[RMDB]
Structure probing data (2A3 and DMS) for a 177-nucleotide construct.
High 2A3 reactivity points to a flexible backbone, as in loops and unpaired stretches.
The data come from the RNA Mapping Database (RMDB), library TTRDEL.
For 2A3, 14,951 sequencing reads were counted.
Conditions: 150 mM KOAc, 10 mM MgCl2 and 150 mM bicine (pH 8.5), 24 C.

RNA sequence: GGGAACGACUCGAGUAGAGUCGAAAAGAUAUGGAUCAGGCGAGUCCAGAUCAUCGGAAACGAUGAGGUAUGGGACGAUGAGCCCUGAUCCUAAGUCAAAACUCAGUUGGCUUCGGCCAACUGAGAACCCUAGACUAAUGUUCGCAUUAGUCUAGGGAAAAGAAACAACAACAACAAC
Reactivity to 2A3 in 0.01 (KOAc 150mM, MgCl2 10mM, bicine 150mM(pH8.5), 24C), signal-to-noise 5, nucleotides 027 to 126: g020a000u060a020u160g010g000a010u000c000a000g000g010c030g050a040g020u000c010c010a020g070a160u000c010a000u000c000g010g030a060a060a050c020g000a000u020g000a000g030g050u270a220u300g140g000g010a000c050g040a120u160g070a020g050c020c000c010u000g000a000u000c010c010u000a050a020g030u010c040a030a020a050a180c010u000c010a010g000u010u000g000g000c000u060u060c220g140g000c000c000a000a000c000u000g000a000g010a000a000
Reactivity to DMS in 0.01 (KOAc 150mM, MgCl2 10mM, bicine 150mM(pH8.5), 24C), signal-to-noise 3, nucleotides 027 to 126: g000a050u000a300u010g000g010a000u000c010a020g010g000c010g010a300g000u000c000c000a080g010a120u000c000a000u000c010g000g000a140a080a210c010g010a010u000g000a010g010g010u000a130u030g010g000g010a020c010g000a080u000g020a130g010c220c000c010u000g000a010u000c000c010u000a010a090g000u000c050a080a040a090a150c010u000c010a010g000u000u000g010g000c000u000u010c180g020g000c000c000a010a000c000u000g010a000g020a030a060